[RMDB]
RNA sequence: GGGAACGACUCGAGUAGAGUCGAAAAGUUAUUCACCAUACUUCAUAUUUGGCUGGAUGGGAGGCCAUAAUGUCUACCUAAAAAGUAUUAGCUACUGAAAAGCACAGCAAUGAAAGCCUUGAGGACUACAGGAGCUCAAAGCACACAAAAGUGGUAACAUUUUAAAUAUGUUCGCAUAUUUAAAAUGAAAAGAAACAACAACAACAAC
Reactivity to DMS in 0.01 (KOAc 150mM, MgCl2 10mM, bicine 150mM(pH8.5), 24C), signal-to-noise 3, nucleotides 027 to 156: g010u010u010a030u010u000c020a110c040c050a130u000a090c050u000u000c040a110u000a130u010u000u000g010g040c040u000g030g010a130u000g020g000g000a120g040g040c020c030a040u000a050a060u010g010u000c010u010a050c030c020u000a050a070a050a100a090g000u000a070u000u010a100g010c060u000a030c030u000g000a070a050a100a110g010c070a060c040a060g030c030a060a090u000g000a110a050a190g020c000c020u010u020g020a080g030g010a070c060u000a110c060a110g000g000a110g010c050u000c050a040a050a090g020c050a070c040a150c060a030a060a040a110g000u000g010g000u000a100a190
Reactivity to 2A3 in 0.01 (KOAc 150mM, MgCl2 10mM, bicine 150mM(pH8.5), 24C), signal-to-noise 6, nucleotides 027 to 156: g040u060u050a070u120u090c040a050c090c010a040u080a130c040u060u110c040a060u110a190u260u110u100g070g000c030u010g030g030a070u030g040g030g000a020g010g000c030c010a050u130a060a030u080g030u000c020u040a160c020c030u060a100a080a030a020a020g050u050a080u090u100a050g030c020u060a030c040u050g040a070a040a040a020g010c030a030c020a070g030c020a050a060u110g060a130a050a000g000c010c000u020u030g040a040g020g030a020c020u070a050c100a050g030g030a020g020c000u010c020a050a080a000g010c030a020c010a000c010a100a110a050a030g070u090g040g010u090a060a020
Structure probing data (DMS and 2A3) for a 207-nucleotide construct. For DMS, 6,559 sequencing reads were counted. For 2A3, 4,713 sequencing reads were counted.